[RMDB]
An RNA of 207 nucleotides, treated with 2A3 and DMS and read out base by base. DMS adducts were read by reverse transcription with MarathonRT. The reactions ran in a buffer of 150 mM KOAc, 10 mM MgCl2 and 150 mM bicine (pH 8.5), at 24 C.
RNA sequence: GGGAACGACUCGAGUAGAGUCGAAAAACCAUUCUUCGGAAUGGUAAAAAGCGUACUACGGUUGAGCGAUGCUCAACAGCGCAUGAGAACUCCCAAAUAGGAGACAUGCGACAUGAGCAUCCCAACCGUAUCGCAAAAAGAGGUAUUCGUACCUCAAACUAUCUUCUUCCUUCGGGAAGAAGAUAGUAAAAGAAACAACAACAACAAC
Reactivity to 2A3 in 0.01 (KOAc 150mM, MgCl2 10mM, bicine 150mM(pH8.5), 24C), signal-to-noise 3, nucleotides 027 to 156: a000c000c000a010u000u000c000u000u020c090g130g010a010a020u030g010g010u150a220a000a000a000a000g020c020g000u070a080c050u000a000c020g000g020u020u040g050a070g080c220g070a000u000g030c000u010c010a040a150c120a180g000c010g000c000a010u010g050a070g090a250a090c000u040c000c020c050a120a270a080u290a140g000g010a000g020a100c000a010u000g000c000g030a010c050a050u050g000a000g000c000a000u000c000c010c000a000a000c000c000g000u000a000u000c000g010c000a000a030a030a130a010g010a000g020g010u070a050u110u250c300g080u090a020c000c000u000c000a010a010
Reactivity to DMS in 0.01 (KOAc 150mM, MgCl2 10mM, bicine 150mM(pH8.5), 24C), signal-to-noise 2, nucleotides 027 to 156: a030c000c000a020u010u000c000u010u010c300g020g000a010a010u020g030g010u000a020a050a180a090a120g030c020g030u000a080c110u000a010c010g000g010u010u010g010a120g010c050g000a050u000g000c000u000c000a030a050c090a120g020c010g020c000a000u000g000a090g000a140a140c010u000c000c010c000a030a130a170u000a050g020g000a040g030a200c020a040u000g000c000g020a090c110a300u000g010a000g000c000a020u000c000c020c010a010a010c000c000g010u000a010u000c000g040c010a030a050a110a130a120g000a000g010g010u000a050u000u000c130g010u000a020c000c000u000c000a000a090